[RMDB]
RNA sequence: GGGAACGACUCGAGUAGAGUCGAAAACUAGACGAGCCGUUUAGCAACAUAGACGCGCCUAGCAGGGAUAAGCUGCGCGUCGAGCUCCGGAGGCUGUUGGUAAAGCUCGGGAAGCCUACUGUGAUAGCAUGUGCUUGCCGUUCGCGGCAAGCACAUGAAAAGAAACAACAACAACAAC
Reactivity to DMS in 0.01 (KOAc 150mM, MgCl2 10mM, bicine 150mM(pH8.5), 24C), signal-to-noise 1, nucleotides 027 to 126: c020u000a050g000a160c020g000a080g020c010c130g000u020u000u000a020g010c030a100a040c040a090u020a200g000a000c010g010c030g000c050c160u020a030g010c020a080g020g040g020a140u010a060a070g020c020u000g000c010g000c010g000u000c000g000a090g000c010u000c070c130g000g150a190g010g020c010u010g040u020u010g000g000u000a000a080a270g010c010u000c000g000g010g000a090a040g010c090c010u000a110c110u000g010u000g000a190u000a070g000
Source: RMDB library OK2TST, as collected in RNAgym. The record gives the reactivity of an RNA of 177 nucleotides to DMS. The RNA was probed in 150 mM KOAc, 10 mM MgCl2 and 150 mM bicine (pH 8.5) at 24 C.